[RMDB]
Conditions: 150 mM KOAc, 10 mM MgCl2 and 150 mM bicine (pH 8.5), 24 C. An RNA of 177 nucleotides, treated with DMS and 2A3 and read out base by base. Values cover nucleotides 27 to 126. DMS adducts were read by reverse transcription with MarathonRT. The DMS profile rests on 2,559 reads.
RNA sequence: GGGAACGACUCGAGUAGAGUCGAAAACUUAGUGAGUUCGCUCACUAAGGGACUCUGGAACCCAGGCUGGAGUGGGACCAAGUAGGAGGCUGGGCACCACCAACAUUCAGCGCUUCGGCGCUGAAAAUGCAAUAGAUAUCUUCGGAUAUCUAUUGCAAAAAGAAACAACAACAACAAC
Reactivity to DMS in 0.01 (KOAc 150mM, MgCl2 10mM, bicine 150mM(pH8.5), 24C), signal-to-noise 3, nucleotides 027 to 126: c000u000u000a000g010u010g000a020g010u000u030c250g020c010u000c000a010c000u000a000a000g000g000g000a100c040u000c030u000g010g010a090a100c040c010c020a060g010g010c050u010g010g000a090g020u000g030g010g010a110c050c030a050a060g000u010a100g010g010a100g010g030c040u010g030g000g010c120a080c020c040a080c060c070a040a090c180a130u000u000c000a000g000c000g010c000u000u010c180g020g010c020g020c000u000g000a000a000a040a090
Reactivity to 2A3 in 0.01 (KOAc 150mM, MgCl2 10mM, bicine 150mM(pH8.5), 24C), signal-to-noise 2, nucleotides 027 to 126: c010u000u000a000g010u000g020a000g000u040u120c140g080c110u000c000a010c010u000a000a000g000g020g000a030c020u020c050u110g070g070a090a090c000c010c000a030g100g030c030u040g010g050a110g040u020g010g030g010a030c010c030a070a030g030u040a030g100g120a050g040g000c010u000g040g010g000c000a020c010c010a010c010c000a040a040c000a060u020u020c000a000g000c000g000c020u020u100c210g120g010c010g000c010u000g000a000a000a000a010